[RMDB]
RNA sequence: GGGAACGACUCGAGUAGAGUCGAAAAUUGGAUAAUUGCAUUACUACAAACUUGAUUAUGUAAUUCUAGCGUAGCGAAAGUAUCUAUGAAAUUUUUUAUUCCGAACAUGUUUCUAGAUAUGCCUAUAUGGUGCAACAUCAUUCGUGAUGUUGCACCAAAAAGAAACAACAACAACAAC
Reactivity to 2A3 in 0.01 (KOAc 150mM, MgCl2 10mM, bicine 150mM(pH8.5), 24C), signal-to-noise 1, nucleotides 027 to 126: u080u150g220g000a090u030a050a030u060u020g110c000a090u000u020a020c170u110a080c060a100a200a140c010u180u020g150a300u300u080a090u060g120u090a090a030u000u000c000u080a080g060c000g090u170a000g000c080g040a000a000a080g000u000a000u000c000u000a030u250g030a040a000a000u100u000u000u000u020u140a280u190u120c060c080g060a000a000c030a150u220g030u140u080u000c000u000a000g020a120u000a020u020g000c020c060u190a260u000a060